Source information:
The data come from the RNA Mapping Database (RMDB), library 15KREP. Chemical mapping of a 177-nucleotide RNA with 2A3.
RNA sequence: GGGAACGACUCGAGUAGAGUCGAAAAGCAAUAUUAUUGCUACACGUCUAAGGACACUUUAGAUGAUAUCUUACAACAGGCUAAUAAGUCUGUUGGUAUUAUAUCUAUGCCUUUGGGAUAUGUGUCUGACCUUUCAACCGUUCGCGGUUGAAAGGUCAAAAGAAACAACAACAACAAC
Reactivity to 2A3 in 0.01 (KOAc 150mM, MgCl2 10mM, bicine 150mM(pH8.5), 24C), signal-to-noise 1, nucleotides 027 to 126: g030c050a050a000u080a100u300u040a050u130u020g000c010u060a070c030a010c040g010u000c000u030a000a010g000g020a030c020a030c090u050u070u060a060g000a030u010g010a000u010a000u000c000u010u020a020c000a010a000c010a000g020g000c000u020a080a060u140a300a000g010u010c000u010g020u000u000g010g000u020a000u030u010a020u000a000u000c000u040a030u030g060c000c050u000u030u120g110g000g030a050u060a050u090g000u010g000u000c020u010
As a SHAPE reagent, 2A3 marks flexible, mostly unpaired nucleotides at the ribose 2'-OH. 2A3 adducts were read by reverse transcription with SuperScript II with manganese.